Source information:
An RNA of 177 nucleotides, treated with DMS and 2A3 and read out base by base. Source: RMDB library RFM100, as collected in RNAgym. The reactions ran in a buffer of 150 mM KOAc, 10 mM MgCl2 and 150 mM bicine (pH 8.5), at 24 C. For DMS the reverse transcriptase was MarathonRT. The 2A3 profile rests on 959 reads.
RNA sequence: GGGAACGACUCGAGUAGAGUCGAAAAAGAGAAGAGUGGUGCAGAGAGAAAAAAGAGCAGUGGGAAUAGGAGCUGUACUCCUUGGGUUCUUGGGAGCAGCAGGAAGCACUAUGGGCGCAGCGUCAUUAUAAAGGUUGUCUUUCGAGACAACCUUUAUAAAAGAAACAACAACAACAAC
Reactivity to DMS in 0.01 (KOAc 150mM, MgCl2 10mM, bicine 150mM(pH8.5), 24C), signal-to-noise 2, nucleotides 027 to 126: a060g000a070g030a050a050g000a030g040u000g000g020u010g020c040a040g010a140g030a140g000a000a010a030a080a080a050g020a040g030c050a060g000u020g010g000g000a110a090u020a020g010g000a110g000c080u020g000u020a130c070u010c000c000u000u050g030g030g020u010u000c030u000u010g000g000g000a080g000c080a050g000c010a090g000g030a030a070g050c000a090c050u000a040u020g030g000g000c080g000c040a100g000c070g000u010c010a070u020u010
Reactivity to 2A3 in 0.01 (KOAc 150mM, MgCl2 10mM, bicine 150mM(pH8.5), 24C), signal-to-noise 2, nucleotides 027 to 126: a000g190a000g030a080a000g030a000g020u070g020g000u040g060c060a000g010a000g030a000g010a080a030a000a040a000a020g070a020g030c050a020g020u090g030g090g020a040a020u020a070g040g020a050g020c050u030g020u050a080c010u010c000c000u000u050g130g000g020u010u060c030u030u050g030g000g030a050g000c010a030g010c010a000g000g030a060a000g010c000a010c060u050a130u100g000g030g000c060g030c030a000g020c000g000u010c000a010u000u060